The record gives the reactivity of an RNA of 177 nucleotides to 2A3. High 2A3 reactivity points to a flexible backbone, as in loops and unpaired stretches. 2A3 adducts were read by reverse transcription with SuperScript II with manganese. The RNA was probed in 150 mM KOAc, 10 mM MgCl2 and 150 mM bicine (pH 8.5) at 24 C.
[RMDB]
RNA sequence: GGGAACGACUCGAGUAGAGUCGAAAAAUAAUCGGGCCUAAUGGUUCGGGCAAAACUACCCUCCUCAACGUCCUUACCGGCUAUGUUAAGCCGGAUGCGGGUAGCGUCCACAUAAUGGGCAAGGAUGCUGCCACUGCCUGUUCGCAGGCAGUGGCAGAAAAGAAACAACAACAACAAC
Reactivity to 2A3 in 0.01 (KOAc 150mM, MgCl2 10mM, bicine 150mM(pH8.5), 24C), signal-to-noise 2, nucleotides 027 to 126: a010u270a000a000u020c000g060g010g000c010c010u080a200a190u180g030g000u070u100c120g000g000g000c090a030a030a030a030c020u120a100c000c000c020u100c030c050u190c020a050a100c060g050u030c000c010u000u000a000c000c000g000g000c000u060a050u110g300u190u300a090a000g000c000c000g020g000a000u030g070c000g000g000g000u000a050g020c000g060u000c000c000a000c030a000u210a180a040u140g000g040g000c020a020a020g000g030a000u010g000